[RMDB]
RNA sequence: GGGAACGACUCGAGUAGAGUCGAAAAUAGCAGGACCCACGCAAAGAUUAUUUUUAACGCCAUCUUGCAUGUCUUUGUUACCGCCUUUACCAAUGCCAGCGAUUUUGCCAUCUUUAAUACCAAUAUCCUACGUCCCCAUUUUCGAAUGGGGACGUAGAAAAGAAACAACAACAACAAC
Reactivity to DMS in 0.01 (KOAc 150mM, MgCl2 10mM, bicine 150mM(pH8.5), 24C), signal-to-noise 2, nucleotides 027 to 126: u000a030g010c060a080g010g000a150c110c000c030a210c170g000c060a050a080a080g000a050u010u000a080u000u000u000u020u010a040a160c080g010c030c050a140u020c020u000u010g000c050a070u000g000u000c080u000u000u000g000u020u060a060c010c030g000c050c010u000u050u010a050c020c010a110a030u000g000c040c000a000g010c000g020a110u010u000u000u030g000c020c060a050u040c020u000u020u010a110a080u000a110c040c060a070a240u020a080u100c210
Reactivity to 2A3 in 0.01 (KOAc 150mM, MgCl2 10mM, bicine 150mM(pH8.5), 24C), signal-to-noise 4, nucleotides 027 to 126: u130a020g000c040a010g060g040a050c000c010c020a050c040g030c000a090a070a030g030a030u040u070a080u100u290u060u060u150a080a010c070g000c020c000a020u060c030u060u060g000c020a060u080g040u000c000u060u100u050g070u060u060a040c030c020g000c030c000u050u050u040a070c060c000a030a060u070g020c000c000a030g010c080g080a110u030u040u020u160g010c000c000a050u020c020u030u080u100a110a030u090a150c040c030a050a070u060a060u180c000
This 177-nucleotide RNA was probed chemically with DMS and 2A3. Conditions: 150 mM KOAc, 10 mM MgCl2 and 150 mM bicine (pH 8.5), 24 C. 2A3 adducts were read by reverse transcription with SuperScript II with manganese. Source: RMDB library RFM100, as collected in RNAgym.